[RMDB]
RNA sequence: GGGAACGACUCGAGUAGAGUCGAAAAGAAAAGAAGCGCUAGAUAGACACCCACGCUCAUGAGCGUACCUCAUACUGUUUUAAGUGUUAUAAUUUUUAUUGUUAAUACCCACGCUUAGAUCAGUAUCCAGUAAGCGACUAUUCGUAGUCGCUUACUGAAAAGAAACAACAACAACAAC
Reactivity to DMS in 0.01 (KOAc 150mM, MgCl2 10mM, bicine 150mM(pH8.5), 24C), signal-to-noise 2, nucleotides 027 to 126: g040a080a050a140a110g010a160a070g030c000g000c020u010a070g010a090u020a090g010a080c080a070c060c030c000a220c080g040c010u000c070a170u020g020a040g010c020g010u010a080c030c030u000c170a020u000a010c000u000g000u000u000u010u010a000a010g000u000g000u000u010a090u060a080a020u000u060u010u000u050a050u030u030g010u020u030a080a120u040a140c130c040c150a100c020g010c000u020u010a010g010a020u000c000a000g010u000a000u010c220
Reactivity to 2A3 in 0.01 (KOAc 150mM, MgCl2 10mM, bicine 150mM(pH8.5), 24C), signal-to-noise 6, nucleotides 027 to 126: g070a000a100a000a020g110a030a010g000c030g010c050u040a030g020a180u060a030g040a030c030a050c030c030c000a000c030g000c000u040c040a110u160g050a000g030c020g010u040a060c000c020u090c020a030u020a010c010u010g010u010u010u020u020a000a010g010u010g080u080u080a140u060a190a240u100u070u050u080u110a170u110u090g020u030u030a080a050u090a110c030c030c030a010c000g000c000u000u000a000g000a010u000c000a000g000u010a020u010c030
This 177-nucleotide RNA was probed chemically with DMS and 2A3. The reactions ran in a buffer of 150 mM KOAc, 10 mM MgCl2 and 150 mM bicine (pH 8.5), at 24 C. It was measured as part of the RMDB library RFM100. Values cover nucleotides 27 to 126. DMS adducts were read by reverse transcription with MarathonRT.